[RMDB]
RNA sequence: GGGAACGACUCGAGUAGAGUCGAAAAACAGCCACCUGCUCUGCAUUUAGAAUAAGCAUAUGAGGCUGCUGUCAUUGCCCAGGAAGAGGUGCAGGGCUAUACUGCUGCAGGAGAAGAGAAGCACUUGGGAUGGUUAGCAGUGGGGCUGUAAGUGGAAAUAGGUCGAUUUAUUCGUAAAUCGACCUAUAAAAGAAACAACAACAACAAC
Reactivity to 2A3 in 0.01 (KOAc 150mM, MgCl2 10mM, bicine 150mM(pH8.5), 24C), signal-to-noise 3, nucleotides 027 to 156: a000c000a000g010c010c000a130c050c040u060g000c000u000c010u020g000c040a050u050u050u130a130g070a170a100u200a160a030g010c050a050u080a080u230g050a080g070g000c020u030g020c070u070g040u020c040a080u040u140g040c000c000c000a010g070g010a070a050g020a020g040g010u030g010c000a000g000g020g000c010u020a010u030a040c000u020g000c010u010g000c010a020g040g060a110g020a080a030g020a030g030a140a010g050c060a040c060u040u030g020g010g020a030u050g080g080u080u190a010g000c000a000g010u020g020g030g000g000c010u010g000u030a070a020g060u050g040g010a030a110
Reactivity to DMS in 0.01 (KOAc 150mM, MgCl2 10mM, bicine 150mM(pH8.5), 24C), signal-to-noise 1, nucleotides 027 to 156: a010c000a040g040c040c020a130c050c040u000g000c000u000c040u000g000c020a130u010u000u010a140g010a220a160u000a090a150g010c040a030u000a060u000g020a150g020g010c020u000g020c040u010g010u000c000a090u000u000g000c010c010c030a200g030g000a140a080g000a140g000g010u010g000c000a090g000g010g010c050u000a060u000a070c010u010g000c030u010g040c020a130g010g010a180g010a060a090g000a140g020a190a130g020c030a060c020u000u030g010g020g030a110u010g010g000u010u000a020g000c040a020g000u000g050g010g010g040c010u000g010u010a010a050g000u000g020g000a090a130
Structure probing data (2A3 and DMS) for a 207-nucleotide construct. For DMS the reverse transcriptase was MarathonRT. The reactions ran in a buffer of 150 mM KOAc, 10 mM MgCl2 and 150 mM bicine (pH 8.5), at 24 C. For 2A3, 1,725 sequencing reads were counted. Values cover nucleotides 27 to 156.